[RMDB]
RNA sequence: GGGAACGACUCGAGUAGAGUCGAAAAGGAUGAGCCGCGCCAUCGUUAAAAACGCGGAAGCCAACUGGUGGGAGUAAAAUACCAUCUGGGGGCUAAAAGGCUCGUAAGCGCAGGGUAAACUGCAACAUGUGAUAGGUUACUUCGGUAACCUAUCACAAAAAGAAACAACAACAACAAC
Reactivity to DMS in 0.01 (KOAc 150mM, MgCl2 10mM, bicine 150mM(pH8.5), 24C), signal-to-noise 2, nucleotides 027 to 126: g040g000a050u040g010a110g050c000c000g000c000g000c140c030a040u040c010g000u040u060a010a020a030a030a030c050g020c060g000g000a130a020g000c000c000a010a000c000u020g020g040u000g000g000g010a050g000u020a050a060a110a060u040a060c000c000a000u000c000u000g000g000g000g030g000c000u010a030a060a100a090g030g010c000u000c120g000u040a050a050g010c130g000c000a040g010g000g010u040a080a050a140c000u020g000c090a100a060c080a040
Reactivity to 2A3 in 0.01 (KOAc 150mM, MgCl2 10mM, bicine 150mM(pH8.5), 24C), signal-to-noise 1, nucleotides 027 to 126: g060g000a020u050g060a010g000c000c000g120c000g000c020c020a090u030c060g050u010u030a010a000a000a020a000c060g000c040g000g010a000a000g020c020c000a000a000c000u000g030g050u000g000g020g020a000g010u080a000a130a100a000u110a070c000c000a000u000c000u000g040g000g000g000g000c000u000a000a070a020a000g040g000c000u020c080g020u070a160a000g080c000g000c050a030g020g000g140u160a000a000a190c030u020g050c000a000a000c000a190

This 177-nucleotide RNA was probed chemically with DMS and 2A3. DMS adducts were read by reverse transcription with MarathonRT. Source: RMDB library RFM100, as collected in RNAgym. The RNA was probed in 150 mM KOAc, 10 mM MgCl2 and 150 mM bicine (pH 8.5) at 24 C.